[RMDB]
RNA sequence: GGGAACGACUCGAGUAGAGUCGAAAACGCCACCGACCCGCUGCCCGAGGGCGUGACCUACGUGCCGGACAGCGCCCGUGUCAACAACGCGACCUUCACGGUCUACAACGGCAGGCAGGUCAACCUCAGGCCGAGGCUGCUUCGGCAGCCUCGGCCUAAAAGAAACAACAACAACAAC
Reactivity to 2A3 in 0.01 (KOAc 150mM, MgCl2 10mM, bicine 150mM(pH8.5), 24C), signal-to-noise 1, nucleotides 027 to 126: c000g070c000c000a140c000c070g040a030c060c000c040g060c090u130g010c040c000c080g000a000g000g030g000c130g040u020g020a020c000c000u000a000c130g300u030g000c020c010g100g000a150c040a100g000c090g000c000c000c000g020u040g000u050c030a070a010c000a060a000c160g170c060g140a030c000c020u100u050c100a070c170g010g000u070c000u030a000c040a030a000c000g000g000c000a000g140g010c010a000g000g000u000c000a000a080c000c030u000c000